RNA sequence: GGGAACGACUCGAGUAGAGUCGAAAAAGGACCUGCGCGGCUUCAGUAGCUGCGGGAGGGGGAGGCAGCGUGCUCCCGCACAAUUUUCAAGCUCGGGUGGAGCUAAGUUUGGAAUCUGUAACCUGGAGCCGUAUUGUAAAUUCGUUUACAAUACGGCAAAAGAAACAACAACAACAAC
Reactivity to 2A3 in 0.01 (KOAc 150mM, MgCl2 10mM, bicine 150mM(pH8.5), 24C), signal-to-noise 4, nucleotides 027 to 126: a010g080g010a040c020c020u040g030c080g010c040g040g000c010u060u040c050a130g050u200a030g040c070u010g000c000g020g000g010a040g040g030g000g020g010a090g050g040c060a040g040c040g090u080g040c000u000c000c020c000g000c000a010c030a060a100u010u050u110u200c070a070a020g010c010u030c040g120g020g010u140g020g030a020g020c020u030a020a060g010u010u060u090g020g010a010a050u050c050u040g050u060a020a070c010c000u020g010g010a000
Reactivity to DMS in 0.01 (KOAc 150mM, MgCl2 10mM, bicine 150mM(pH8.5), 24C), signal-to-noise 3, nucleotides 027 to 126: a070g000g010a140c020c010u000g010c030g030c070g020g010c030u010u020c160a110g030u040a100g000c090u010g010c030g020g000g000a040g010g020g000g000g000a120g000g010c050a130g030c060g020u020g020c030u000c000c010c030g010c050a070c090a060a060u010u000u000u020c050a040a050g010c010u000c060g020g000g010u010g020g010a060g000c040u000a030a050g010u000u010u000g010g000a040a030u030c070u020g010u020a090a100c080c010u010g000g010a300
Conditions: 150 mM KOAc, 10 mM MgCl2 and 150 mM bicine (pH 8.5), 24 C. Structure probing data (2A3 and DMS) for a 177-nucleotide construct. For 2A3, 3,022 sequencing reads were counted. High 2A3 reactivity points to a flexible backbone, as in loops and unpaired stretches. Reactivities are rounded to 0.1 and cut off at 0 and 3. For 2A3 the reverse transcriptase was SuperScript II with manganese. Values cover nucleotides 27 to 126.